Overview
The record gives the reactivity of an RNA of 177 nucleotides to DMS and 2A3. It was measured as part of the RMDB library OK1LIB.

RNA sequence: GGGAACGACUCGAGUAGAGUCGAAAAAUGCCGCAUUCAGUGACGGUUACUCUAGUGGGCCACUGUCCAUCUAGCGUUGACAUCUACAUACUAUAUAGUAAUACCAAUACUCAAGACUACGAAACGGGCCUAUAGGCUCAUUCGUGAGCCUAUAGGCAAAAGAAACAACAACAACAAC
Reactivity to DMS in 0.01 (KOAc 150mM, MgCl2 10mM, bicine 150mM(pH8.5), 24C), signal-to-noise 2, nucleotides 027 to 126: a050u090g000c010c110g030c070a040u000u070c080a130g000u070g000a250c070g000g000u000u030a050c010u000c040u050a050g070u000g000g000g050c040c250a040c200u020g020u030c030c050a010u000c020u000a010g000c070g000u040u030g130a040c000a110u000c040u040a000c020a110u040a000c090u040a120u010a110u090a110g050u000a040a050u000a070c170c140a060a030u020a070c140u000c070a080a080g010a150c020u020a050c180g030a070a100a090c170g000g000
Reactivity to 2A3 in 0.01 (KOAc 150mM, MgCl2 10mM, bicine 150mM(pH8.5), 24C), signal-to-noise 3, nucleotides 027 to 126: a000u140g010c010c000g070c020a010u090u130c090a040g100u010g110a090c010g020g000u010u020a020c010u010c000u020a020g000u060g050g000g020c030c030a060c160u240g030u000c010c010a050u100c010u030a030g020c010g050u000u090g050a010c040a120u040c050u040a010c020a090u080a100c030u010a030u020a000u090a200g040u110a020a080u040a120c030c070a030a050u020a070c000u020c040a040a030g130a060c020u050a060c130g100a100a150a000c010g010g100
Notes:
For 2A3 the reverse transcriptase was SuperScript II with manganese. The reactions ran in a buffer of 150 mM KOAc, 10 mM MgCl2 and 150 mM bicine (pH 8.5), at 24 C.